[RMDB]
RNA sequence: GGGAACGACUCGAGUAGAGUCGAAAAACGCACCUCAUACGUGAGGUGCGACUGUGCAGGGAUCGCCACCCGUCAGCGCGUUGCGCCCACGGGUGCCUUUCCGAGCCGACCGUUACGACGGUCGGCAUGCUGAAGUCUAAUUCGUUAGACUUCAGCAAAAAGAAACAACAACAACAAC
Reactivity to 2A3 in 0.01 (KOAc 150mM, MgCl2 10mM, bicine 150mM(pH8.5), 24C), signal-to-noise 5, nucleotides 027 to 126: a000c010g010c000a000c010c000u000c010a040u050a120c270g110u030g010a010g000g010u000g010c020g000a000c000u110g040u130g090c090a140g000g000g050a030u030c030g040c070c030a020c000c000c000g040u070c070a030g000c000g030c140g260u250u300g010c000g000c000c030c000a010c000g000g000g000u000g000c000c010u030u030u000c010c010g020a010g000c000c010g000a000c000c010g000u030u060a130c300g010a000c000g090g000u000c000g000g000c000a000
Reactivity to DMS in 0.01 (KOAc 150mM, MgCl2 10mM, bicine 150mM(pH8.5), 24C), signal-to-noise 5, nucleotides 027 to 126: a190c040g040c000a000c010c000u000c020a070u010a100c230g020u020g020a010g000g010u000g010c000g000a010c050u000g030u010g010c170a130g000g000g000a010u000c080g010c180c030a030c020c000c000g030u000c300a080g010c020g010c010g010u020u040g030c000g030c010c050c300a020c010g010g010g000u000g000c140c020u000u020u000c000c000g010a100g030c000c000g000a010c040c000g000u000u000a160c170g010a080c020g010g010u000c000g000g000c000a000
Chemical mapping of a 177-nucleotide RNA with 2A3 and DMS. For DMS the reverse transcriptase was MarathonRT. It was measured as part of the RMDB libraries RFM100 and RFMREP. Reactivities are given for positions 27 through 126. The RNA was probed in 150 mM KOAc, 10 mM MgCl2 and 150 mM bicine (pH 8.5) at 24 C.